[RMDB]
RNA sequence: GGGAACGACUCGAGUAGAGUCGAAAAGAAACGUGCGGGCUUUCAUGUGCGCUACCUGAUAAUUGGGUAUAUCUUUGGCCUGUUGUCUGCUUGCCUUCCGCGUGUGGGUGCCUGUGCGUCUGCGUUCGCGGGGUAGCACGUUCGUGUGCUACCCCGCAAAAGAAACAACAACAACAAC
Reactivity to 2A3 in 0.01 (KOAc 150mM, MgCl2 10mM, bicine 150mM(pH8.5), 24C), signal-to-noise 2, nucleotides 027 to 126: g090a000a070a000c000g000u000g000c000g030g020g000c010u010u090u000c000a000u000g030u040g000c020g020c070u010a000c000c090u000g160a040u060a220a140u230u270g020g010g010u020a020u000a090u110c030u210u040u160g050g000c000c010u000g020u080u030g120u080c040u090g060c060u080u140g000c020c000u020u070c010c010g000c030g010u030g000u020g000g000g030u030g000c010c010u000g000u000g000c000g000u000c010u020g060c000g000u030u030c000